The data come from the RNA Mapping Database (RMDB), library OK2TST.
This 177-nucleotide RNA was probed chemically with DMS.
The DMS profile rests on 1,264 reads.
DMS (dimethyl sulfate) methylates the pairing face of unpaired adenines and cytosines.
RNA sequence: GGGAACGACUCGAGUAGAGUCGAAAAGUUAGGGAUUUGAAGUAGUUAAGUCAUCCUCACAGCAUCCCUGGGAAUGACAGUUGACAUUAAGCUAUUUUAUUGUUGGAAAAGGAAAUUAUGGAGGUUACUACCAGGUACGGUUCGCCGUACCUGGUAGAAAAGAAACAACAACAACAAC
Reactivity to DMS in 0.01 (KOAc 150mM, MgCl2 10mM, bicine 150mM(pH8.5), 24C), signal-to-noise 1, nucleotides 027 to 126: g010u000u000a080g000g010g020a070u000u000u000g020a090a090g000u020a010g000u010u000a030a130g000u000c030a070u010c010c010u000c020a070c080a050g000c170a100u000c010c020c030u000g010g000g000a030a020u000g000a030c040a110g020u000u000g000a080c100a100u000u000a050a070g010c100u000a040u000u000u000u000a070u000u020g010u010u010g010g000a010a040a090a080g020g000a090a050a090u010u000a070u010g020g020a050g000g030u000u010a100
Conditions: 150 mM KOAc, 10 mM MgCl2 and 150 mM bicine (pH 8.5), 24 C.